[RMDB]
RNA sequence: GGGAACGACUCGAGUAGAGUCGAAAACUCUCUUAUGUCCUAGCGCUGGUCGCUCCACCCGACCCAGGAGUCGCCAGCAGGCCCGAGCCUACCUCACCCACACGCCAGAGGCCCCCAGCGACUGCCAGUAUUGUUCUGUAUUCGUACAGAACAAUACAAAAGAAACAACAACAACAAC
Reactivity to DMS in 0.01 (KOAc 150mM, MgCl2 10mM, bicine 150mM(pH8.5), 24C), signal-to-noise 6, nucleotides 027 to 126: c080u000c030u010c040u010u020a110u010g000u000c020c020u000a130g010c140g010c010u000g010g000u010c230g020c020u000c010c010a110c120c070c040g010a100c030c040c060a160g000g000a040g020u010c290g010c010c010a020g010c030a080g020g000c020c020c050g010a110g000c020c010u000a080c040c020u010c050a120c020c000c010a070c050a090c060g000c030c030a070g010a170g010g020c050c020c020c020c010a100g010c050g000a070c050u010g010c040c070a140
Reactivity to 2A3 in 0.01 (KOAc 150mM, MgCl2 10mM, bicine 150mM(pH8.5), 24C), signal-to-noise 2, nucleotides 027 to 126: c010u050c000u000c030u100u150a120u210g080u040c010c030u040a040g080c010g000c110u020g010g040u080c040g010c010u020c010c020a090c040c050c050g120a110c020c040c020a040g010g010a010g070u100c040g030c020c000a000g000c010a000g020g000c010c010c030g030a010g000c000c020u050a060c010c000u020c010a060c020c000c010a030c000a000c070g020c010c000a030g020a070g090g010c010c000c000c000c010a010g020c020g060a060c030u080g050c050c010a010

Chemical mapping of a 177-nucleotide RNA with DMS and 2A3. It was measured as part of the RMDB library OK2TST. For 2A3 the reverse transcriptase was SuperScript II with manganese. The RNA was probed in 150 mM KOAc, 10 mM MgCl2 and 150 mM bicine (pH 8.5) at 24 C.